[RMDB]
RNA sequence: GGGAACGACUCGAGUAGAGUCGAAAAGCCAGGUAAAGUAGUAUAUGAUAUCCUUUUUAUUCCCAUGCAGAUGUCCAUGGCUUCUUUUUCCUUUGGUCAAAUCUGAUUUGUAUUUCUUCUUGGUUAAAAAAAUGAACUUAUUCGUAAGUUCAUUUUUAAAAGAAACAACAACAACAAC
Reactivity to 2A3 in 0.01 (KOAc 150mM, MgCl2 10mM, bicine 150mM(pH8.5), 24C), signal-to-noise 5, nucleotides 027 to 126: g020c010c000a030g010g020u080a060a050a080g020u070a010g050u020a080u040a070u240g070a050u050a050u120c010c010u040u040u000u050u150a070u090u030c020c020c010a020u110g010c020a020g010a080u050g040u010c020c010a030u030g010g000c000u070u040c000u070u110u020u050u040c000c000u080u080u090g030g010u050c030a060a060a120u020c040u020g040a110u030u030u100g040u040a060u030u060u030c020u010u030c030u060u080g050g010u130u110a120a060
Reactivity to DMS in 0.01 (KOAc 150mM, MgCl2 10mM, bicine 150mM(pH8.5), 24C), signal-to-noise 4, nucleotides 027 to 126: g020c030c020a040g010g000u010a050a080a100g010u010a060g010u010a060u020a060u020g000a100u000a050u010c020c010u000u020u010u020u020a100u030u010c010c000c000a130u030g010c100a080g010a060u010g000u000c020c050a060u010g000g010c050u000u000c040u020u020u010u010u000c000c010u000u030u010g020g010u000c050a050a090a060u010c060u010g000a100u000u000u010g010u010a110u010u010u010c020u000u010c030u000u000g010g000u020u020a000a000
Structure probing data (2A3 and DMS) for a 177-nucleotide construct. In probing experiments dimethyl sulfate is read out at A N1 and C N3, which are open when not base-paired. For 2A3, 3,509 sequencing reads were counted. For 2A3 the reverse transcriptase was SuperScript II with manganese. Reactivities are given for positions 27 through 126. For DMS the reverse transcriptase was MarathonRT. The RNA was probed in 150 mM KOAc, 10 mM MgCl2 and 150 mM bicine (pH 8.5) at 24 C. Source: RMDB libraries RFM100 and RFMREP, as collected in RNAgym.